[RMDB]
RNA sequence: GGGAACGACUCGAGUAGAGUCGAAAAGCUCUAGGAGACUAGAGCGAUACGUUAGAUAGCUCGUGGCAUGACUAACGGAUAGCCAGGUACGAGGUUGCCAGAGGACAUAGCUAUAGCUAUGUCCAAAGACCUAUGAUACCUUCGGGUAUCAUAGGUCAAAAGAAACAACAACAACAAC
Reactivity to DMS in 0.01 (KOAc 150mM, MgCl2 10mM, bicine 150mM(pH8.5), 24C), signal-to-noise 2, nucleotides 027 to 126: g000c020u000c000u010a000g000g000a170g000a180c010u000a000g000a010g010c010g000a040u000a020c020g000u000u000a050g000a150u010a040g030c020u000c060g020u010g000g010c050a080u020g030a110c050u020a020a060c090g000g000a050u000a080g010c020c000a140g000g010u000a060c080g000a060g000g000u030u000g010c020c030a080g010a260g000g010a020c000a000u000a000g030c000u020a060u020a110g040c000u000a000u000g040u010c000c000a000a060a050
Reactivity to 2A3 in 0.01 (KOAc 150mM, MgCl2 10mM, bicine 150mM(pH8.5), 24C), signal-to-noise 2, nucleotides 027 to 126: g000c000u000c000u000a000g020g130a090g060a150c000u000a000g000a000g020c010g000a030u030a000c020g000u000u000a030g020a190u020a100g050c000u000c100g080u090g000g010c060a050u120g000a130c010u000a050a020c010g050g000a060u050a080g140c020c020a030g000g050u090a050c040g050a020g010g050u030u010g020c000c000a020g030a090g030g000a000c010a000u000a000g000c020u150a110u070a300g000c000u010a000u020g010u000c000c000a020a010a000
Notes:
Chemical mapping of a 177-nucleotide RNA with DMS and 2A3. Conditions: 150 mM KOAc, 10 mM MgCl2 and 150 mM bicine (pH 8.5), 24 C. The DMS profile rests on 4,111 reads. The 2A3 profile rests on 1,312 reads. In probing experiments dimethyl sulfate is read out at A N1 and C N3, which are open when not base-paired. The data come from the RNA Mapping Database (RMDB), library OK1LIB. For DMS the reverse transcriptase was MarathonRT.